[RMDB]
RNA sequence: GGGAACGACUCGAGUAGAGUCGAAAACUCAAUGUGGUUAGGGUUUAUGUCUGGGUGCUCCUGUGAGUUGGUGAAGGAUGAGAAAAACAUAUGAUCUGAGAUGUACAUUUAGUAGAUUGAUUGCCUUUUAGGCAAGUAAGCCAUUUUCCCACAUUGAGCCGGUAUUAUGAUUCGUCAUAAUACCGGCAAAAGAAACAACAACAACAAC
Reactivity to DMS in 0.01 (KOAc 150mM, MgCl2 10mM, bicine 150mM(pH8.5), 24C), signal-to-noise 2, nucleotides 027 to 156: c020u000c040a050a100u010g020u000g030g020u010u000a100g000g010g020u000u000u000a050u020g020u010c030u010g020g010g040u000g030c010u000c010c030u020g040u010g030a160g030u000u000g000g020u010g000a100a120g020g030a070u000g000a130g000a060a040a070a070a050c090a130u000a080u020g000a060u000c050u000g010a140g020a060u000g030u000a070c070a120u000u000u000a060g040u000a050g000a060u000u000g000a090u010u010g010c000c010u000u000u000u000a100g060g020c010a000a040g000u010a060a050g000c020c010a150u000u000u000u000c060c040c000a030c100a130u000u010g010a230
Reactivity to 2A3 in 0.01 (KOAc 150mM, MgCl2 10mM, bicine 150mM(pH8.5), 24C), signal-to-noise 5, nucleotides 027 to 156: c040u020c010a010a060u070g010u030g010g050u060u080a070g040g000g000u010u070u030a070u090g030u000c020u130g070g020g000u040g010c030u030c040c010u040g040u050g050a070g040u050u120g070g030u050g050a060a050g040g040a020u090g030a030g100a040a100a030a000a010c060a050u110a050u120g050a050u000c030u060g020a030g010a120u100g060u070a040c020a100u060u090u050a080g030u000a040g050a160u000u120g050a080u030u050g000c010c000u100u230u080u130a020g000g000c000a010a000g030u020a030a000g020c020c020a060u050u040u050u040c020c030c000a040c020a040u020u060g020a000